[RMDB]
RNA sequence: GGGAACGACUCGAGUAGAGUCGAAAAUCCUAAGUCCGUCUAAGACAGCCUAGGGAGGCGACGAUCUAUGUCGGAAACGACAUAGGGAGCCUCCAACUAGGCAAUGACGGACGGAUAUGGAAAAAACUUCUAGUAGUGUUCGCACUACUAGAAGUAAUCAUUAAUCUGACUUCGGUCAGAUUAAUGAAAAAGAAACAACAACAACAAC
Reactivity to 2A3 in 0.01 (KOAc 150mM, MgCl2 10mM, bicine 150mM(pH8.5), 24C), signal-to-noise 2, nucleotides 027 to 156: u000c000c000u030a170a010g020u030c010c010g000u020c000u050a160a000g110a230c110a220g300c010c000u020a030g000g000g000a010g000g000c010g020a120c000g000a030u010c000u000a000u000g010u000c000g000g040a040a080a080c030g000a000c000a000u010a000g010g000g000a000g010c000c010u000c000c000a000a010c000u010a000g010g000c010a010a010u000g000a000c000g020g000a000c010g000g000a040u050a130u080g050g040a040a090a020a060a010a050c000u040u090c000u000a000g000u000a000g000u020g050u100u050c220g040c080a000c000u000a000c010u000a000g000a000a000g000u000a000a000
Reactivity to DMS in 0.01 (KOAc 150mM, MgCl2 10mM, bicine 150mM(pH8.5), 24C), signal-to-noise 1, nucleotides 027 to 156: u000c000c000u030a140a140g060u000c030c000g010u000c000u010a080a200g050a190c080a250g010c000c000u020a080g020g010g020a050g010g000c010g020a120c170g000a090u020c000u000a000u000g010u000c000g000g020a140a100a300c020g000a030c010a020u000a010g020g000g000a180g000c000c000u000c010c000a020a020c030u000a020g010g060c000a040a030u020g020a130c080g000g000a010c020g000g040a060u000a070u000g000g000a000a060a110a020a140a040c010u000u000c000u000a000g000u000a000g040u000g040u010u020c300g090c000a030c020u000a000c000u000a000g000a000a000g010u000a010a050

The data come from the RNA Mapping Database (RMDB), library RNAMAK. An RNA of 207 nucleotides, treated with 2A3 and DMS and read out base by base. For DMS, 2,210 sequencing reads were counted. The RNA was probed in 150 mM KOAc, 10 mM MgCl2 and 150 mM bicine (pH 8.5) at 24 C. For DMS the reverse transcriptase was MarathonRT. Reactivities are given for positions 27 through 156.